[RMDB]
RNA sequence: GGGAACGACUCGAGUAGAGUCGAAAAGAUAUGGACCUGUAUUCGCUUUGAUCUCGGAAACGAGGGAGCGGGAUACACGGGUCCUAAGUCAAAGCGGAUUAAUCUCGUUCGCGAGAUUAAUCCGCAACGAUAAGGCGAAGUUCGCUUCGCCUUAUCGAAAAGAAACAACAACAACAAC
Reactivity to DMS in 0.01 (KOAc 150mM, MgCl2 10mM, bicine 150mM(pH8.5), 24C), signal-to-noise 2, nucleotides 027 to 126: g000a030u000a300u000g020g000a040c010c000u000g000u010a050u000u000c010g020c000u000u000u020g000a090u010c000u000c000g020g000a100a070a230c000g010a010g030g000g010a010g010c020g000g000g000a020u000a020c040a070c200g000g010g010u000c000c000u000a000a100g000u000c040a090a120a120g020c000g000g000a010u000u010a010a010u000c000u000c000g000u000u010c230g020c020g000a030g000a020u020u000a000a000u000c000c000g030c000a000a010
Reactivity to 2A3 in 0.01 (KOAc 150mM, MgCl2 10mM, bicine 150mM(pH8.5), 24C), signal-to-noise 3, nucleotides 027 to 126: g030a020u100a080u160g000g010a010c000c000u000g010u030a030u020u020c000g020c070u240u270u100g110a140u080c000u020c010g020g030a130a110a100c030g000a020g020g010g000a020g000c090g050g000g060a030u050a060c070a040c070g070g000g010u040c000c000u020a120a010g050u040c080a080a100a050g000c010g000g000a000u000u000a010a020u000c060u010c020g040u090u100c300g000c040g190a010g010a000u000u000a000a000u000c000c000g000c000a000a000